The record gives the reactivity of an RNA of 177 nucleotides to 2A3 and DMS. It was measured as part of the RMDB library OK2TST. The RNA was probed in 150 mM KOAc, 10 mM MgCl2 and 150 mM bicine (pH 8.5) at 24 C. For 2A3 the reverse transcriptase was SuperScript II with manganese.
RNA sequence: GGGAACGACUCGAGUAGAGUCGAAAACAACGAGUUGUAUGCUAGGUUACAACUGUCCUUUCAAAUGUGCAAGGGAGUAGUGGUGCAGUUAAAGAGCAAUGACUUUAUUGUCAACUCCCACUCUCAACUAAACUAUACCCUUCGGGGUAUAGUUUAGAAAAGAAACAACAACAACAAC
Reactivity to 2A3 in 0.01 (KOAc 150mM, MgCl2 10mM, bicine 150mM(pH8.5), 24C), signal-to-noise 6, nucleotides 027 to 126: c040a000a010c020g080a020g020u010u020g030u060a110u100g110c090u140a090g160g140u130u040a010c010a030a010c010u020g080u060c000c000u050u100u110c130a210a210a150u250g080u080g150c050a050a050g090g040g010a040g030u170a010g000u050g040g010u070g030c060a030g010u070u100a130a090a020g090a010g010c020a040a050u010g030a040c030u100u140u170a090u270u080g020u020c020a040a160c090u010c010c000c000a010c000u010c000u000c010a030a090
Reactivity to DMS in 0.01 (KOAc 150mM, MgCl2 10mM, bicine 150mM(pH8.5), 24C), signal-to-noise 7, nucleotides 027 to 126: c100a060a110c200g010a030g010u000u000g020u000a040u000g010c100u000a080g010g010u000u000a030c010a030a020c010u000g010u010c030c020u010u000u000c100a070a120a130u010g020u000g010c140a070a080g000g010g010a030g010u010a020g030u000g000g020u010g010c090a050g010u000u010a050a080a100g000a080g000c040a060a070u010g010a050c070u010u000u010a100u030u000g010u000c070a050a090c120u000c010c000c000a060c100u000c010u000c030a080a260